[RMDB]
RNA sequence: GGGAACGACUCGAGUAGAGUCGAAAAGAUAUGGAUGAGAACUACAGCUUAGCAGCUUGGACCUCGGAAACGAGCUAGCUGCAAUAAGCUGCUCAUCCUAAGUCAAAUCAGUAGUUCGCUACUGAAAGUUACCUAGGGGGUUCGCCCCCUAGGUAACAAAAGAAACAACAACAACAAC
Reactivity to 2A3 in 0.01 (KOAc 150mM, MgCl2 10mM, bicine 150mM(pH8.5), 24C), signal-to-noise 2, nucleotides 027 to 126: g040a010u050a030u100g020g000a010u040g040a020g000a130a070c130u210a090c300a020g000c020u030u090a050g070c030a020g030c030u060u120g070g060a250c040c060u030c050g000g000a030a060a020c000g000a000g060c020u040a000g050c030u000g000c000a000a050u100a020a010g000c000u000g020c000u000c000a000u000c000c000u000a050a000g040u020c010a010a030a260u040c010a010g010u000a010g010u030u130c300g030c170u000a010c020u030g060a120a060a020
Reactivity to DMS in 0.01 (KOAc 150mM, MgCl2 10mM, bicine 150mM(pH8.5), 24C), signal-to-noise 1, nucleotides 027 to 126: g000a000u000a280u030g010g000a030u010g000a050g000a100a040c070u010a270c020a060g010c010u010u020a050g020c050a020g000c010u000u000g030g000a070c300c000u000c010g000g000a070a080a120c050g000a010g000c080u010a020g010c000u010g010c000a100a080u000a010a000g000c010u000g000c020u000c000a000u000c000c000u000a010a050g000u030c030a040a130a150u010c000a000g020u030a000g010u010u030c230g010c000u000a000c000u010g000a030a070a100

An RNA of 177 nucleotides, treated with 2A3 and DMS and read out base by base.
The reactions ran in a buffer of 150 mM KOAc, 10 mM MgCl2 and 150 mM bicine (pH 8.5), at 24 C.
The DMS profile rests on 916 reads.
The data come from the RNA Mapping Database (RMDB), library TTRDEL.
For 2A3, 1,862 sequencing reads were counted.
2A3 adducts were read by reverse transcription with SuperScript II with manganese.